The record gives the reactivity of an RNA of 207 nucleotides to DMS and 2A3.

RNA sequence: GGGAACGACUCGAGUAGAGUCGAAAACGGAAGCAUUAAAACCAUUCGAGCUAGUCAUUGCGUGGCGUGUCUCUCCGCAGCGUGUUGGCGAAUGUAAAGAGUGACUAAGCAUGUAGUACCGAGGAUGAUAAGAGCAAUUCGUUCGCGAAUUGCUCAACGAUCAAGAAUCCUUCGGGAUUCUUGAUCGAAAAGAAACAACAACAACAAC
Reactivity to DMS in 0.01 (KOAc 150mM, MgCl2 10mM, bicine 150mM(pH8.5), 24C), signal-to-noise 2, nucleotides 027 to 156: c060g000g020a070a060g040c030a170u010u000a070a110a070a180c050c020a150u000u000c010g000a140g030c010u000a090g010u010c040a040u000u020g010c120g030u000g010g030c020g000u000g000u020c040u010c050u000c080c040g040c030a060g050c060g070u000g040u000u000g000g000c000g010a100a070u000g050u000a070a020a160g030a110g010u000g010a080c040u020a060a090g010c060a080u000g010u000a090g030u000a110c020c010g010a120g030g000a080u000g010a130u000a110a200g030a020g040c000a020a030u000u000c020g040u000u020c300g000c000g000a000a020u020u000g000c010u010c010a000a030
Reactivity to 2A3 in 0.01 (KOAc 150mM, MgCl2 10mM, bicine 150mM(pH8.5), 24C), signal-to-noise 3, nucleotides 027 to 156: c030g030g030a030a020g030c040a050u080u100a060a040a060a050c050c000a040u060u100c040g010a010g040c020u090a040g050u020c000a050u010u140g020c050g030u040g060g010c070g000u070g050u020c020u000c020u010c130c020g040c050a020g010c010g010u070g040u090u050g040g000c030g060a070a040u090g010u140a050a060a050g050a010g020u050g000a030c030u050a090a040g030c030a030u070g030u090a030g020u050a060c050c030g010a020g060g010a030u060g010a020u090a260a110g000a000g000c000a000a000u010u000c000g020u020u060c110g000c010g140a000a000u000u000g000c000u000c000a000a000
For DMS the reverse transcriptase was MarathonRT. For DMS, 2,408 sequencing reads were counted. It was measured as part of the RMDB library M2RFPK.